Background:
An RNA of 207 nucleotides, treated with 2A3 and DMS and read out base by base. In probing experiments dimethyl sulfate is read out at A N1 and C N3, which are open when not base-paired. Values cover nucleotides 27 to 156. DMS adducts were read by reverse transcription with MarathonRT.
RNA sequence: GGGAACGACUCGAGUAGAGUCGAAAAUCAAUUCUCUGAUUAUGAUGAGGUUUUCUUUAGACUAGAUAUAAACCUAGAUCCUUGGCAUGUACAUUCUGUUCUGCCUCUCUGGCUAUGUUCUUCUCUUGUCAAAACAAAAGUCGUGAUAAUAUAGGGACCAAAAUAAAUCAUUCGUGAUUUAUUUUGGAAAAGAAACAACAACAACAAC
Reactivity to 2A3 in 0.01 (KOAc 150mM, MgCl2 10mM, bicine 150mM(pH8.5), 24C), signal-to-noise 5, nucleotides 027 to 156: u080c010a010a110u120u000c010u010c010u030g060a060u020u140a050u080g070a020u040g030a040g070g000u040u030u060u040c030u060u110u080a050g000a050c030u010a020g020a050u090a020u070a160a050a020c020c000u010a030g030a160u090c020c030u040u040g020g000c020a030u180g030u070a030c010a070u110u120c050u150g030u050u020c010u020g010c000c000u020c010u010c030u040g020g010c010u020a030u070g030u020u020c020u060u000c020u000c000u020u030g040u030c000a050a050a050a060c030a020a100a070a030g050u040c020g030u030g070a010u050a110a060u140a050u150a090g030g010g030a000
Reactivity to DMS in 0.01 (KOAc 150mM, MgCl2 10mM, bicine 150mM(pH8.5), 24C), signal-to-noise 2, nucleotides 027 to 156: u000c050a090a180u000u000c010u000c000u000g010a140u000u000a040u010g010a070u010g010a240g010g010u000u000u000u010c040u000u000u000a060g010a090c030u000a040g020a090u010a100u010a060a080a060c040c000u000a050g020a060u000c040c030u020u010g010g020c020a050u000g010u010a030c040a180u000u010c100u000g010u010u000c030u000g020c000c010u000c050u010c020u010g020g010c030u010a040u000g000u000u000c020u010u000c020u000c020u000u000g000u000c060a040a030a030a070c040a050a000a050a290g010u000c010g020u000g000a040u000a040a110u000a130u010a060g010g020g010a210